[RMDB]
An RNA of 177 nucleotides, treated with DMS and 2A3 and read out base by base.
The 2A3 profile rests on 970 reads.
Source: RMDB library OK2TST, as collected in RNAgym.
2A3 adducts were read by reverse transcription with SuperScript II with manganese.

RNA sequence: GGGAACGACUCGAGUAGAGUCGAAAAUGGCGUCAUCCUCGGAGUUUUAAACUUUAUCCAACGUCCUAACACCACACUCAUUCUCGAUCAUAGUAGUAUGAUGAGAAUUCACGAAAAUGCCGAGCUAGCCUCCGAUCAUUUUCGAAUGAUCGGAGGCAAAAGAAACAACAACAACAAC
Reactivity to DMS in 0.01 (KOAc 150mM, MgCl2 10mM, bicine 150mM(pH8.5), 24C), signal-to-noise 1, nucleotides 027 to 126: u020g010g010c040g060u000c060a100u000c070c000u000c060g020g000a060g030u000u000u010u020a030a110a080c060u000u000u000a120u010c120c070a070a060c080g000u010c010c020u000a080a110c140a120c020c070a010c250a140c150u000c100a080u000u000c000u000c000g030a010u000c010a000u000a130g000u050a000g030u010a010u010g000a010u000g010a020g080a020a010u000u010c040a000c090g010a030a030a040a090u000g000c020c060g000a020g050c200u000a150
Reactivity to 2A3 in 0.01 (KOAc 150mM, MgCl2 10mM, bicine 150mM(pH8.5), 24C), signal-to-noise 1, nucleotides 027 to 126: u050g030g000c030g010u000c020a150u040c020c000u050c050g060g060a040g000u080u060u020u250a180a210a080c040u050u000u120a060u070c040c020a050a020c040g000u000c000c000u050a040a010c030a020c080c030a030c000a030c000u130c010a020u020u000c050u000c000g160a050u040c000a010u000a040g100u040a050g220u030a040u000g000a000u000g000a000g000a010a010u060u020c110a050c010g070a000a000a040a050u090g000c040c000g000a010g010c020u020a020